RNA sequence: GGGAACGACUCGAGUAGAGUCGAAAAGAAGAGAGUAGAAGAUGGCCGGCAUGGUCCCAGCCCCUCGCUGGCGCCGGCUGGGCAACACCAUUGCACGCCGGUGGCGUAUGGUACAAGAGAGAAAGAAGAUAUCCUCCGUGUUCGCACGGAGGAUAUCAAAAGAAACAACAACAACAAC
Reactivity to DMS in 0.01 (KOAc 150mM, MgCl2 10mM, bicine 150mM(pH8.5), 24C), signal-to-noise 2, nucleotides 027 to 126: g000a110a070g000a020g000a060g010u030a070g020a080a100g000a110u030g000g060c030c000g000g000c010a070u010g070g000u020c300c000c020a060g000c010c070c100c080u010c170g040c030u000g000g000c230g000c000c020g020g000c000u000g020g000g040c260a020a180c110a080c100c070a130u000u040g000c080a000c010g040c030c090g000g000u040g010g020c050g050u000a000u000g000g000u000a030c180a060a070g020a090g000a030g030a130a120a210g000a090a070
Reactivity to 2A3 in 0.01 (KOAc 150mM, MgCl2 10mM, bicine 150mM(pH8.5), 24C), signal-to-noise 1, nucleotides 027 to 126: g110a140a000g060a000g030a010g000u130a000g040a230a010g010a120u130g080g080c040c050g020g010c040a050u130g010g000u120c010c000c000a000g000c000c000c090c000u020c080g000c040u020g000g040c010g030c030c000g010g050c000u010g020g020g000c020a080a080c000a020c100c020a040u000u150g030c040a030c070g030c040c020g020g000u100g020g010c000g020u140a080u030g000g010u070a030c000a050a080g060a000g000a010g050a080a120a000g060a090a000